[RMDB]
RNA sequence: GGGAACGACUCGAGUAGAGUCGAAAAGCAUGUUUAUGUGAACCUAAGGAUGAAUCUCAGUGACUGUAGAUUAGAAGCACUGAUUAUAGCAUUGGCUGCUUGGUGUUCACUUUAUUUGCAUCUGUGAGUUUCCAACAAGCCCUAAGUUUACUGACAAAAUUUAUGAGGAUUUCGAUCCUCAUAAAUUAAAAGAAACAACAACAACAAC
Reactivity to 2A3 in 0.01 (KOAc 150mM, MgCl2 10mM, bicine 150mM(pH8.5), 24C), signal-to-noise 5, nucleotides 027 to 156: g010c030a030u060g040u040u070u100a100u180g010u020g010a000a010c000c000u000a040a020g090g010a090u170g070a140a150u070c020u010c030a030g050u030g130a300c020u050g040u180a070g080a300u160u090a080g040a150a000g010c010a000c010u000g020a020u060u080a080u070a050g030c060a060u040u210g170g000c020u040g010c010u040u010g030g000u120g010u090u000c020a000c040u000u060u020a070u000u060u070g010c010a070u020c040u030g050u010g050a050g030u020u070u040c010c000a020a020c060a040a050g040c000c000c010u080a110a050g000u010u030u100a120c020u030g060a030c030a040a190
Reactivity to DMS in 0.01 (KOAc 150mM, MgCl2 10mM, bicine 150mM(pH8.5), 24C), signal-to-noise 3, nucleotides 027 to 156: g030c030a060u010g020u000u000u000a050u020g040u000g000a060a070c000c030u000a040a090g020g020a150u010g020a070a070u010c090u010c040a080g000u000g010a130c050u000g000u000a070g030a160u000u010a110g020a160a110g010c030a090c020u010g010a110u000u000a100u000a050g000c070a140u000u010g010g010c040u000g010c100u000u000g030g030u000g050u000u000c030a060c020u000u000u000a050u010u000u000g020c040a120u000c080u000g000u010g010a080g020u000u010u010c010c010a030a080c090a070a110g000c000c000c020u000a030a170g010u000u000u000a080c040u020g000a100c090a040a080

Structure probing data (2A3 and DMS) for a 207-nucleotide construct.